An RNA of 177 nucleotides, treated with 2A3 and DMS and read out base by base. It was measured as part of the RMDB library OK2TST. The RNA was probed in 150 mM KOAc, 10 mM MgCl2 and 150 mM bicine (pH 8.5) at 24 C.

RNA sequence: GGGAACGACUCGAGUAGAGUCGAAAAUUGUCGCGUGUUUUUCAAAAACGACCAGAGUCGCGUUUCGCUUACCGUUUCUCCUCCCCUGACGUGUCUCUGUCAGACCAGUUUAGGUUUUGUCUACCGCCACCAUACCUAAAUUCGUUUAGGUAUGGUGAAAAGAAACAACAACAACAAC
Reactivity to 2A3 in 0.01 (KOAc 150mM, MgCl2 10mM, bicine 150mM(pH8.5), 24C), signal-to-noise 7, nucleotides 027 to 126: u070u060g080u060c040g000c050g030u060g070u050u080u040u040u100c080a090a080a020a030a030c070g020a030c030c050a030g010a010g050u040c010g000c020g020u010u040u070c050g010c050u060u140a140c080c050g100u040u090u030c060u030c000c000u020c010c010c000c000u000g010a010c010g020u040g030u020c010u010c000u030g040u030c020a010g020a040c000c020a050g020u070u110u160a070g020g000u020u020u040u060g010u000c010u030a020c010c010g010c020
Reactivity to DMS in 0.01 (KOAc 150mM, MgCl2 10mM, bicine 150mM(pH8.5), 24C), signal-to-noise 9, nucleotides 027 to 126: u010u000g010u000c060g020c060g010u000g010u000u000u000u010u020c110a050a070a070a100a080c080g000a060c090c060a080g000a070g010u000c020g010c040g010u000u000u000c060g020c100u000u000a080c150c060g010u000u010u000c060u000c020c020u000c010c000c010c020u000g000a040c040g020u000g000u000c020u000c030u000g010u000c100a090g010a080c040c030a140g010u010u000u010a100g010g000u000u000u000u000g010u000c050u000a100c040c030g000c150